[RMDB]
RNA sequence: GGGAACGACUCGAGUAGAGUCGAAAACUGCCGCCGGGACGCAGUGAUCCUCGCAGGGUCGCACGGUCGCCUCGGGUCGGCCUCGUGUCGGCUCGACUUGCGAGGGGAGCGAGUGGCGAGCCCGACCAAAACUUUCUCGCCUUCGGGCGAGAAAGAAGAUAAACGUGCAGUUCGCUGCACGUUUAUCAAAAGAAACAACAACAACAAC
Reactivity to 2A3 in 0.01 (KOAc 150mM, MgCl2 10mM, bicine 150mM(pH8.5), 24C), signal-to-noise 3, nucleotides 027 to 156: c030u060g020c000c020g010c020c010g020g050g130a080c040g020c030a110g190u000g000a000u000c000c000u000c010g030c020a020g040g000g010u110c040g020c040a050c070g010g060u050c010g010c020c020u050c020g070g000g030u070c000g000g010c020c010u130c150g230u300g080u050c010g020g000c010u020c010g050a040c020u020u030g010c010g010a020g000g000g010g000a010g000c010g020a070g100u110g030g000c000g000a070g010c030c020c010g010a030c020c010a010a070a020a060c000u020u000u000c000u000c000g000c010c030u030u060c230g090g010g000c000g000a000g000a000a010a000g000a000a000